RNA sequence: GGGAACGACUCGAGUAGAGUCGAAAAUGACCGUGGCCGAAGUCGAGCGCAUCGCCGACCUGGAGUCCCGCGAGGUGUUACUGGCCAAGCUGGCCGGUGCGAUGAAGGGCAACCUGGCCAAGGCGGCAGUCUCGCCCUUAUUCGUAAGGGCGAGACUAAAAGAAACAACAACAACAAC
Reactivity to DMS in 0.01 (KOAc 150mM, MgCl2 10mM, bicine 150mM(pH8.5), 24C), signal-to-noise 2, nucleotides 027 to 126: u000g020a100c240c030g020u000g020g040c040c000g020a060a120g010u000c050g000a190g050c100g010c070a070u000c030g000c030c170g000a060c020c010u000g010g070a210g000u000c020c010c030g010c150g000a100g030g010u000g000u000u010a000c030u000g010g020c010c000a050a270g030c250u000g030g010c000c000g000g010u000g030c000g000a080u010g010a100a070g000g000g000c010a020a120c040c000u030g020g040c000c000a060a030g010g000c120g010g050c080
Reactivity to 2A3 in 0.01 (KOAc 150mM, MgCl2 10mM, bicine 150mM(pH8.5), 24C), signal-to-noise 1, nucleotides 027 to 126: u180g080a060c050c020g010u080g040g000c030c010g050a060a030g020u090c090g010a040g030c050g030c100a090u110c070g010c030c040g060a020c000c000u060g050g050a070g020u110c010c030c000g080c050g050a020g040g050u050g000u110u100a030c040u040g000g010c010c030a060a010g170c160u120g000g000c000c000g010g020u040g000c020g000a060u130g080a060a080g090g010g000c020a070a120c030c050u100g020g020c030c000a000a000g040g000c000g020g000c000
Conditions: 150 mM KOAc, 10 mM MgCl2 and 150 mM bicine (pH 8.5), 24 C. This 177-nucleotide RNA was probed chemically with DMS and 2A3.